[RMDB]
The record gives the reactivity of an RNA of 177 nucleotides to DMS. Source: RMDB library OK2TST, as collected in RNAgym.

RNA sequence: GGGAACGACUCGAGUAGAGUCGAAAAAGGAGCCCUCCCGUGUGAUCCACGAACCCACCGAAGUCUAUGGUCCCCACGUAGUUGAUCCACUUCACGGGAGUGCGUGGAUUGGUGAUCACGUACUCUCCCUUGCGACCCAAUUCGUUGGGUCGCAAGGAAAAGAAACAACAACAACAAC
Reactivity to DMS in 0.01 (KOAc 150mM, MgCl2 10mM, bicine 150mM(pH8.5), 24C), signal-to-noise 1, nucleotides 027 to 126: a120g000g000a110g010c030c010c010u000c010c010c040g010u000g010u010g010a100u020c020c040a070c050g180a020a070c090c040c000a090c090c040g010a100a040g040u020c080u000a050u000g000g000u000c070c010c010c050a080c070g000u000a020g050u020u000g010a100u000c040c040a120c110u020u000c060a130c300g000g000g010a000g010u000g020c070g010u020g030g010a070u000u010g000g000u000g000a210u010c010a010c030g010u000a010c050u000c020u040c010